[RMDB]
The record gives the reactivity of an RNA of 177 nucleotides to 2A3 and DMS. DMS adducts were read by reverse transcription with MarathonRT. Reactivities are given for positions 27 through 126. Source: RMDB library OK2TRN, as collected in RNAgym. The 2A3 profile rests on 2,121 reads. The DMS profile rests on 3,030 reads.
RNA sequence: GGGAACGACUCGAGUAGAGUCGAAAAUCUUCAGUUGUAACUGCUUCCGUUGCAGUUGGUUCAACUAAAACCUCUUCCACUAAAACAGCUUUCUCUUCAACUAAGUCUGGUGCUGGUGCAACUAUUGUCUUGAACAUCAGUUCGCUGAUGUUCAAGAAAAAGAAACAACAACAACAAC
Reactivity to 2A3 in 0.01 (KOAc 150mM, MgCl2 10mM, bicine 150mM(pH8.5), 24C), signal-to-noise 3, nucleotides 027 to 126: u050c030u140u120c040a030g000u010u030g020u040a010a030c000u000g030c000u210u050c130c100g210u130u140g030c010a000g000u030u020g010g010u060u050c030a040a010c030u080a030a010a090a150c010c020u020c030u060u030c020c010a070c040u150a080a100a060a060c020a040g010c020u020u110u000c030u030c010u110u060c050a120a080c060u130a090a030g040u080c070u030g050g010u040g030c050u040g040g030u030g020c020a030a030c030u090a130u210u240g080
Reactivity to DMS in 0.01 (KOAc 150mM, MgCl2 10mM, bicine 150mM(pH8.5), 24C), signal-to-noise 4, nucleotides 027 to 126: u010c050u020u000c080a050g020u010u010g020u010a030a030c020u000g000c010u000u020c210c210g010u020u000g010c030a030g000u000u000g040g000u010u000c030a060a030c070u000a090a060a130a120c060c020u000c080u000u010c020c020a070c110u010a040a070a070a100c120a060g000c030u000u010u000c020u000c040u000u000c090a090a080c070u000a070a110g010u000c030u010g020g000u000g000c040u000g010g010u000g010c040a040a090c070u010a090u000u020g000